This 207-nucleotide RNA was probed chemically with 2A3.
[RMDB]
RNA sequence: GGGAACGACUCGAGUAGAGUCGAAAAAUGAUCUUCUUGAUCAGAAGUUUCGUUUUCUAUUUGAUCCUCAUGUGCUGAUUGUUCAGCAGGAUCAUCCAUCUCUGGGUGCUGGUCACGUGCUUCAUCCAUAACUUCAUCAAGUUGGUCUUGAUCAAGACGUCAUACCCAUCUUCGGAUGGGUAUGACGAAAAGAAACAACAACAACAAC
Reactivity to 2A3 in 0.01 (KOAc 150mM, MgCl2 10mM, bicine 150mM(pH8.5), 24C), signal-to-noise 1, nucleotides 027 to 156: a000u130g000a020u010c010u000u030c000u060u020g000a050u050c080a090g000a060a050g000u000u080u170c140g010u050u130u030u060c270u190a300u130u000u070g000a000u000c000c040u100c090a200u300g130u060g180c040u040g010a230u300u280g050u300u000c000a000g010c010a000g000g000a000u020c000a020u000c000c030a080u070c090u120c000u140g000g000g000u040g070c070u080g000g020u050c050a070c200g040u220g030c000u000u040c000a050u000c000c000a000u050a140a020c000u000u020c000a040u000c000a000a000g010u000u010g100g000u080c000u110u060g010a080u050c060a020a020g140a050
Source: RMDB library OK3TST, as collected in RNAgym. Values are in units of 0.01, from 0 to 300, in steps of 10. For 2A3 the reverse transcriptase was SuperScript II with manganese. Conditions: 150 mM KOAc, 10 mM MgCl2 and 150 mM bicine (pH 8.5), 24 C.